The record gives the reactivity of an RNA of 177 nucleotides to DMS and 2A3.
[RMDB]
RNA sequence: GGGAACGACUCGAGUAGAGUCGAAAACGCUCGGGAUGGGCCUCAGUGCCGACGAGGAGUCCGCAGGUGGGAGGAUCAGCCACCGGAGAGGGACGCGAUGGUAAGAGUGGAGGAAAGUUCGGAGGGACUAGAGUAUUUAGUUCGCUAAAUACUCUAGAAAAGAAACAACAACAACAAC
Reactivity to DMS in 0.01 (KOAc 150mM, MgCl2 10mM, bicine 150mM(pH8.5), 24C), signal-to-noise 4, nucleotides 027 to 126: c180g020c030u010c050g010g010g020a110u010g000g010g000c000c020u000c140a070g030u010g020c040c040g000a070c050g010a070g010g010a170g000u000c030c050g030c060a150g000g020u000g010g020g000a130g020g010a120u010c110a120g010c030c030a040c030c000g000g010a120g010a130g000g000g010a050c100g010c060g010a070u000g000g020u010a050a080g010a080g030u000g010g020a110g000g010a050a060a070g020u000u000c070g000g010a090g010g000g010a210
Reactivity to 2A3 in 0.01 (KOAc 150mM, MgCl2 10mM, bicine 150mM(pH8.5), 24C), signal-to-noise 2, nucleotides 027 to 126: c030g000c010u010c020g070g010g080a130u130g070g040g020c000c000u070c070a050g020u050g100c000c030g010a020c010g020a030g030g020a030g010u040c010c030g040c040a020g000g030u030g010g020g020a090g050g000a080u090c050a020g070c030c010a030c010c000g010g030a050g050a020g010g010g020a010c030g000c030g040a040u090g030g020u020a050a050g050a030g060u080g020g030a030g020g000a110a060a000g030u080u060c030g010g010a030g010g020g000a000
For 2A3 the reverse transcriptase was SuperScript II with manganese. For 2A3, 2,651 sequencing reads were counted.